[RMDB]
RNA sequence: GGGAACGACUCGAGUAGAGUCGAAAAGGUAAGUUUUACGCGAAUCAAAUCAGGGCAAAACCUGAAAUGGACCGUGUGUUAAAUUUGGCAGAAGGAUUACUAAAUAAUACCGUAGGUGGUUGUAAUAUGGAUAAUCCGUCAUAUCAGCAAUCUCCGACAUAUUACGUCAGUUCGCUGACGUAAUAUGAAAAGAAACAACAACAACAAC
Reactivity to 2A3 in 0.01 (KOAc 150mM, MgCl2 10mM, bicine 150mM(pH8.5), 24C), signal-to-noise 6, nucleotides 027 to 156: g060g030u050a030a100g010u020u010u050u130a020c010g010c010g040a020a050u140c020a000a040a000u000c010a010g030g020g050c160a130a080a110a130c010c000u010g010a010a020a010u010g000g020a020c030c030g020u020g010u020g020u020u090a040a100a120u080u070u090g070g030c040a040g050a120a020g040g020a020u080u040a070c020u060a060a030a100u130a060a060u080a140c050c070g030u050a060g010g050u050g020g000u010u010g010u020a050a040u030a040u040g010g030a040u050a190a070u210c040c010g010u020c010a010u040a030u060c060a020g030c000a020a030u010c030u010c030c010g020a020
Reactivity to DMS in 0.01 (KOAc 150mM, MgCl2 10mM, bicine 150mM(pH8.5), 24C), signal-to-noise 4, nucleotides 027 to 156: g010g030u000a060a050g000u000u000u000u000a040c020g010c000g020a050a100u010c020a010a040a300u000c010a020g010g000g010c010a140a090a190a300c010c010u000g000a000a060a300u010g010g020a060c070c040g040u000g020u000g000u010u000a020a050a110u000u000u010g030g010c060a090g020a080a090g010g010a050u000u000a080c040u000a060a060a120u000a070a120u010a020c030c030g010u010a100g020g040u010g020g020u000u010g010u000a090a060u000a070u000g020g010a060u000a040a120u010c030c040g020u020c020a060u010a100u000c050a090g040c040a030a070u000c040u010c000c010g010a220
The record gives the reactivity of an RNA of 207 nucleotides to 2A3 and DMS.
For DMS, 8,782 sequencing reads were counted.
Source: RMDB library OK3TST, as collected in RNAgym.
2A3 adducts were read by reverse transcription with SuperScript II with manganese.
Conditions: 150 mM KOAc, 10 mM MgCl2 and 150 mM bicine (pH 8.5), 24 C.